[RMDB]
RNA sequence: GGGAACGACUCGAGUAGAGUCGAAAAGAUAUGGAUCUUACUACCCACCGAUAUGUAAGUUAUUCGGAAACGAAAUUCUUAUUUAUCGAGGUAAGAUCCUAAGUCAAAACCUUGGUUCGCCAAGGAACUCUAUUAUGGACUUCGGUCCAUAAUAGAGAAAAGAAACAACAACAACAAC
Reactivity to DMS in 0.01 (KOAc 150mM, MgCl2 10mM, bicine 150mM(pH8.5), 24C), signal-to-noise 2, nucleotides 027 to 126: g000a050u010a150u000g030g010a020u010c010u000u000a000c010u010a040c010c010c070a300c130c000g000a010u000a000u020g010u000a000a000g040u020u000a170u020u000c010g000g010a060a120a190c000g000a000a010a300u010u000c000u000u010a010u000u000u000a000u000c000g010a150g000g000u000a000a020g000a000u000c000c010u010a030a070g000u000c140a070a100a110a030c010c000u010u010g000g010u010u040c250g040c010c000a000a010g010g010a070a090
Reactivity to 2A3 in 0.01 (KOAc 150mM, MgCl2 10mM, bicine 150mM(pH8.5), 24C), signal-to-noise 3, nucleotides 027 to 126: g100a060u200a160u300g000g000a000u000c000u000u010a010c010u140a150c020c010c000a000c020c010g000a000u000a000u050g010u000a000a010g020u100u090a200u180u040c010g040g020a060a080a030c010g040a030a040a130u220u050c010u020u010a030u010u020u020a010u010c010g010a000g000g000u000a000a000g000a000u000c000c000u010a040a010g160u110c100a030a030a110a300c000c000u020u010g040g010u100u130c300g070c060c010a000a000g000g010a000a020

Structure probing data (DMS and 2A3) for a 177-nucleotide construct.
The 2A3 profile rests on 4,032 reads.
2A3 adducts were read by reverse transcription with SuperScript II with manganese.
Source: RMDB library TTRDEL, as collected in RNAgym.
The DMS profile rests on 1,482 reads.